Structure probing data (2A3 and DMS) for a 177-nucleotide construct. The RNA was probed in 150 mM KOAc, 10 mM MgCl2 and 150 mM bicine (pH 8.5) at 24 C. The DMS profile rests on 1,502 reads. Source: RMDB library OK2TST, as collected in RNAgym. As a SHAPE reagent, 2A3 marks flexible, mostly unpaired nucleotides at the ribose 2'-OH. 2A3 adducts were read by reverse transcription with SuperScript II with manganese.

RNA sequence: GGGAACGACUCGAGUAGAGUCGAAAAUCGUGGGUGGCGACAAAGCGUGUACCCAUCUGGAUACCAUCGCAUCCGAGCGUGAGAUACUUCUUGAAAUCGCUUUGAUCGAAGACACCCCCGCCGAAGACUCAAUCUGAUUCUUCGGAAUCAGAUUGAGAAAAGAAACAACAACAACAAC
Reactivity to 2A3 in 0.01 (KOAc 150mM, MgCl2 10mM, bicine 150mM(pH8.5), 24C), signal-to-noise 1, nucleotides 027 to 126: u120c010g000u060g000g000g000u020g040g030c010g000a010c000a000a020a020g000c040g010u060g020u110a100c020c000c000a040u000c020u020g000g030a030u030a060c030c010a100u120c070g000c030a040u030c040c080g060a060g060c110g020u050g050a050g000a040u100a110c060u060u130c010u060u120g050a120a030a060u060c010g020c000u000u040u010g070a170u070c040g000a080a030g190a030c010a010c000c000c000c020c000g000c000c010g020a070a030g020a040
Reactivity to DMS in 0.01 (KOAc 150mM, MgCl2 10mM, bicine 150mM(pH8.5), 24C), signal-to-noise 2, nucleotides 027 to 126: u010c040g010u000g010g010g040u000g010g000c000g010a050c030a030a030a020g000c010g030u000g010u010a110c050c030c020a070u010c070u000g030g000a040u000a070c120c140a080u010c070g010c060a020u010c060c060g010a060g010c120g060u000g010a100g010a090u000a050c110u000u000c080u020u020g000a040a070a080u000c020g010c020u000u010u010g000a090u000c030g030a150a170g020a230c040a020c000c020c000c020c030g040c040c050g000a090a100g020a140